[RMDB]
RNA sequence: GGGAACGACUCGAGUAGAGUCGAAAAUUAAAACUCGCAAGUUCCGGUGACAGAUCGGGGAAAAAAUCUCGGGAGCAUCGAAUUGUUUUCAGGCCCUUUCCUCGGGUGUUCGAAGGCUCUGCGCCGGCGAUAUUGUUUAGUUCGCUAAACAAUAUCGAAAAGAAACAACAACAACAAC
Reactivity to DMS in 0.01 (KOAc 150mM, MgCl2 10mM, bicine 150mM(pH8.5), 24C), signal-to-noise 3, nucleotides 027 to 126: u010u010a070a050a070a120c100u000c060g000c190a090a140g000u000u010c010c010g000g020u010g000a100c020a020g010a110u010c010g010g000g000g000a000a000a020a040a040a050u010c020u010c210g010g000g010a050g020c010a010u000c180g010a140a090u000u010g020u000u000u020u000c040a080g000g010c040c010c040u020u000u000c010c010u000c030g010g010g020u000g000u000u010c110g010a100a080g000g000c030u010c070u000g000c030g020c050c030g010g010
Reactivity to 2A3 in 0.01 (KOAc 150mM, MgCl2 10mM, bicine 150mM(pH8.5), 24C), signal-to-noise 1, nucleotides 027 to 126: u090u000a050a020a060a060c040u060c050g120c100a150a000g020u140u070c010c000g030g020u070g020a040c000a020g070a120u070c020g040g010g000g060a010a020a020a070a040a120u050c050u060c110g000g000g020a030g000c010a020u070c080g120a160a110u150u080g040u140u060u070u050c020a010g050g000c000c050c000u010u060u030c000c030u000c000g010g020g030u030g020u010u090c090g080a040a040g110g010c020u010c040u020g020c000g020c010c010g000g000
Chemical mapping of a 177-nucleotide RNA with DMS and 2A3. Reactivities are given for positions 27 through 126. The reactions ran in a buffer of 150 mM KOAc, 10 mM MgCl2 and 150 mM bicine (pH 8.5), at 24 C.